[RMDB]
RNA sequence: GGGAACGACUCGAGUAGAGUCGAAAACAGCUGGGUCCGUCGCGGCUGCACUCCUUGGUAAGCGCCGGUCAGACCCACCGAUCGGCGGCGCGGGUAUUCGAUGUCGACGGCGACAGCCCGGUGGCGGUCCUGUAUGCAUUUUCGAAUGCAUACAGGAAAAAGAAACAACAACAACAAC
Reactivity to 2A3 in 0.01 (KOAc 150mM, MgCl2 10mM, bicine 150mM(pH8.5), 24C), signal-to-noise 4, nucleotides 027 to 126: c020a000g010c020u010g000g000g000u030c040c000g000u000c010g000c010g030g020c010u080g010c010a020c040u060c030c010u120u190g180g010u220a180a130g060c000g020c010c010g000g010u000c000a020g030a180c030c020c010a000c010c010g000a020u000c000g020g000c010g070g030c040g020c020g030g040g010u080a130u070u240c090g040a050u120g010u020c010g010a300c010g080g020c000g010a020c010a010g000c000c020c020g020g010u020g050g020c070g020g070
Reactivity to DMS in 0.01 (KOAc 150mM, MgCl2 10mM, bicine 150mM(pH8.5), 24C), signal-to-noise 6, nucleotides 027 to 126: c070a200g020c040u010g000g010g000u000c050c030g020u000c010g010c020g000g010c020u000g020c120a070c100u000c060c070u010u010g020g010u010a120a230g010c010g000c010c010g010g000u000c020a090g010a110c070c050c050a050c110c050g000a060u000c010g010g000c010g010g030c040g010c070g000g000g000u000a100u000u010c110g010a100u010g020u000c010g010a100c040g030g010c050g010a050c040a140g000c020c010c030g010g000u010g000g020c110g010g000

Annotation: Structure probing data (2A3 and DMS) for a 177-nucleotide construct. For 2A3, 6,010 sequencing reads were counted. The data come from the RNA Mapping Database (RMDB), library OK2TRN. For 2A3 the reverse transcriptase was SuperScript II with manganese.